Description: An RNA of 177 nucleotides, treated with DMS and read out base by base. Reactivities are rounded to 0.1 and cut off at 0 and 3. For DMS, 796 sequencing reads were counted. The reactions ran in a buffer of 150 mM KOAc, 10 mM MgCl2 and 150 mM bicine (pH 8.5), at 24 C. The data come from the RNA Mapping Database (RMDB), library OK2TRN. Values cover nucleotides 27 to 126.
RNA sequence: GGGAACGACUCGAGUAGAGUCGAAAAAUCGUAUUGCAGCUUGGCGGCUCAAACCCACAAGAGCUUGCCACUUGCACAAAAAUGGCUGAAGACUGGGGUUAUGACGAAGUCAACUUGAAUGUAGGCAUGCCGUACUGGUAUUCGUACCAGUACGGCAAAAAGAAACAACAACAACAAC
Reactivity to DMS in 0.01 (KOAc 150mM, MgCl2 10mM, bicine 150mM(pH8.5), 24C), signal-to-noise 1, nucleotides 027 to 126: a090u010c120g010u000a100u030u000g010c020a020g000c130u030u000g040g020c000g010g000c010u000c000a080a080a150c020c040c050a080c110a090a050g020a030g010c000u010u010g080c030c000a040c120u030u000g000c100a040c220a030a050a080a050a050u000g000g020c000u000g000a080a090g000a050c080u000g000g000g010g000u000u000a040u010g000a080c090g000a070a070g010u000c020a030a090c040u010u000g010a040a020u020g010u010a100g040g000c100a120